[RMDB]
RNA sequence: GGGAACGACUCGAGUAGAGUCGAAAAGGAUCUGGUAUGUAUGUUAACGCGGUACCCCUGAGAUCCCUCAAAUCAGCUAAAUCACUUGCAUCUCAGGCUCUACCAACUCCAAGUGGAUAGGGAUGACCUAUGCCCUCCCUUUCGAGGGAGGGCAUAGAAAAGAAACAACAACAACAAC
Reactivity to DMS in 0.01 (KOAc 150mM, MgCl2 10mM, bicine 150mM(pH8.5), 24C), signal-to-noise 2, nucleotides 027 to 126: g000g000a070u000c000u000g000g000u000a060u000g000u000a020u000g000u000u000a140a200c070g000c010g000g000u000a090c140c090c010c000u040g000a110g000a060u000c000c000c050u010c130a040a110a070u000c060a020g010c090u010a050a070a140u000c100a030c030u000u000g020c080a070u010c070u000c010a030g010g000c040u000c010u000a060c000c060a120a160c080u000c060c060a240a070g000u000g000g000a070u000a090g000g000g000a050u010g010a020c110
Reactivity to 2A3 in 0.01 (KOAc 150mM, MgCl2 10mM, bicine 150mM(pH8.5), 24C), signal-to-noise 2, nucleotides 027 to 126: g030g020a030u000c020u030g050g020u080a120u100g050u030a080u050g070u130u140a150a090c030g020c000g030g000u000a040c020c000c000c010u010g000a000g060a050u030c000c040c000u020c000a050a130a100u030c020a020g010c060u130a100a120a150u190c010a020c070u030u080g000c010a050u000c000u020c030a010g050g080c000u000c000u000a000c000c030a040a120c000u000c000c020a000a160g110u000g070g080a070u000a020g040g000g020a060u080g020a000c000